[RMDB]
RNA sequence: GGGAACGACUCGAGUAGAGUCGAAAAUGUAAUUUAAGAGCGCAAUCUUCACUUCGCCCCUUUUCUGCAUAAUCCUUGUUUAGCCAAAAGGCGUAGAUAACAAGUUCAUUAACAAGAAAAGCAAAGACUACUAUCAAAGGUUCGCCUUUGAUAGUAGAAAAGAAACAACAACAACAAC
Reactivity to 2A3 in 0.01 (KOAc 150mM, MgCl2 10mM, bicine 150mM(pH8.5), 24C), signal-to-noise 2, nucleotides 027 to 126: u030g000u030a020a110u030u090u060a110a020g020a020g040c070g020c120a060a140u020c010u030u040c040a060c050u030u040c020g040c000c000c000c040u000u020u010u020c010u020g000c010a030u050a060a010u120c100c000u000u020g010u000u030u020a000g000c010c000a070a300a050a040g010g000c010g010u030a040g020a070u060a020a010c020a030a000g010u030u050c000a020u010u040a040a010c020a060a020g060a000a040a000a000g050c060a070a000a030g040a040
Reactivity to DMS in 0.01 (KOAc 150mM, MgCl2 10mM, bicine 150mM(pH8.5), 24C), signal-to-noise 4, nucleotides 027 to 126: u000g020u010a080a120u000u000u020a090a070g010a070g010c070g030c140a070a050u000c040u000u000c080a070c050u000u010c070g000c010c020c060c010u000u000u000u000c000u000g010c150a260u010a020a020u000c170c010u000u000g000u000u000u000a070g000c010c020a080a070a120a150g030g010c010g040u000a080g000a050u010a030a000c020a010a010g000u000u010c100a020u000u010a020a070c130a090a040g000a020a020a020a030g020c170a050a070a110g020a240